[RMDB]
RNA sequence: GGGAACGACUCGAGUAGAGUCGAAAAGAAAAUAAGAACACAUGUUCUCAUCUUCCAGGAUGCAGCAGACUGAAGAAAUUCAGACAUCCCGCAACCUGCGAUUAUCGCAAGGUCAAGGCAAAGUCCGGGAUAUCAACUAAUUCGUUAGUUGAUAUCCAAAAGAAACAACAACAACAAC
Reactivity to DMS in 0.01 (KOAc 150mM, MgCl2 10mM, bicine 150mM(pH8.5), 24C), signal-to-noise 9, nucleotides 027 to 126: g000a050a030a070a040u010a080a020g000a040a020c030a180c230a100u040g010u000u000c010u000c050a030u000c040u000u010c030c090a110g000g000a050u000g010c110a140g010c070a070g010a120c010u000g000a020a020g010a080a060a130u000u000c010a020g010a200c090a080u010c030c010c000g010c140a110a050c010c010u000g010c010g000a230u030u030a100u010c010g000c000a030a050g000g000u000c080a070a100g000g010c050a050a090a160g000u010c030c030g020
Reactivity to 2A3 in 0.01 (KOAc 150mM, MgCl2 10mM, bicine 150mM(pH8.5), 24C), signal-to-noise 9, nucleotides 027 to 126: g040a010a060a010a030u190a040a020g040a060a010c100a010c040a190u240g020u030u000c010u000c010a050u010c010u110u030c040c020a020g050g000a020u040g020c050a030g010c020a020g060a100c010u020g000a010a000g020a030a070a030u040u010c000a000g050a070c010a060u030c010c000c000g020c030a020a030c000c000u010g000c010g030a050u100u180a170u290c010g000c050a090a100g020g000u030c040a060a050g030g000c020a150a100a010g030u010c020c010g030